[RMDB]
RNA sequence: GGGAACGACUCGAGUAGAGUCGAAAAUAUUGGAAACAACAAUUUGCUUAAUAGCAUCCUAGUGCCAGCGGAACAACAUCUGGUAACAGAUGCCUCUGGGGCCAAAAGCCAAGGUUUGACAGACCCACAUAUGCGUUAACUUCGGUUAACGCAUAUGAAAAGAAACAACAACAACAAC
Reactivity to DMS in 0.01 (KOAc 150mM, MgCl2 10mM, bicine 150mM(pH8.5), 24C), signal-to-noise 5, nucleotides 027 to 126: u000a090u010u000g000g000a110a100a150c100a040a050c110a090a060u000u000u000g000c010u010u020a080a130u020a100g010c010a070u010c030c030u000a060g000u010g020c000c000a010g010c130g020g010a060a020c070a070a210c010a010u000c010u000g000g000u050a090a150c010a010g010a000u000g000c010c010u000c010u000g000g000g000g000c030c070a060a060a080a190g000c010c030a080a090g010g010u000u010u000g000a060c180a100g000a090c020c000c100a170
Reactivity to 2A3 in 0.01 (KOAc 150mM, MgCl2 10mM, bicine 150mM(pH8.5), 24C), signal-to-noise 6, nucleotides 027 to 126: u100a030u030u060g040g030a100a070a010c040a050a010c020a090a120u030u030u100g020c020u070u130a090a030u100a230g000c010a010u030c000c040u060a040g030u040g080c000c000a020g010c060g030g030a080a050c050a030a000c000a070u000c000u000g000g010u000a040a000c000a000g000a010u010g010c010c000u000c020u010g040g000g040g000c020c010a020a070a020a010g020c020c010a020a030g040g010u050u040u080g050a030c030a020g070a060c000c010c000a040
The record gives the reactivity of an RNA of 177 nucleotides to DMS and 2A3.
For DMS the reverse transcriptase was MarathonRT.
The RNA was probed in 150 mM KOAc, 10 mM MgCl2 and 150 mM bicine (pH 8.5) at 24 C.
It was measured as part of the RMDB libraries RFM100 and RFMREP.